RNA sequence: GGGAACGACUCGAGUAGAGUCGAAAAUAAGUCUAGUUCGCUAGACUUACUAUCGGGAAAACAGCCUCCCGGCUCGAUCAGGCGGAUUCCGACCAAGCGCUGCAACACACGUAUUCGUACGUGUGAAAAGCACUGUCACAUUCGUGUGACAGUGCUUAAAAGAAACAACAACAACAAC
Reactivity to 2A3 in 0.01 (KOAc 150mM, MgCl2 10mM, bicine 150mM(pH8.5), 24C), signal-to-noise 1, nucleotides 027 to 126: u050a020a010g000u000c000u000a010g020u010u030c130g010c100u000a000g010a010c010u000u020a000c010u050a040u140c020g060g020g000a020a120a020a090c030a080g020c020c010u000c010c020c010g040g000c040u040c030g020a080u090c080a090g050g000c050g130g040a160u150u090c030c040g000a140c020c030a070a010g000c030g000c160u040g110c060a140a000c010a020c000a000c020g020u060a040u000u060c160g030u020a050c000g000u000g000u020g010a080a010
Reactivity to DMS in 0.01 (KOAc 150mM, MgCl2 10mM, bicine 150mM(pH8.5), 24C), signal-to-noise 1, nucleotides 027 to 126: u000a010a010g010u000c000u000a010g010u020u000c300g000c020u000a000g010a020c000u000u000a010c050u000a030u050c030g000g000g000a070a110a100a160c050a080g000c050c020u000c010c030c010g010g040c040u010c040g020a110u000c150a080g020g000c050g050g000a200u010u000c070c040g000a070c180c090a060a130g000c120g010c020u000g010c150a140a130c000a030c000a010c010g010u050a010u000u000c220g030u000a000c000g000u000g000u000g000a020a020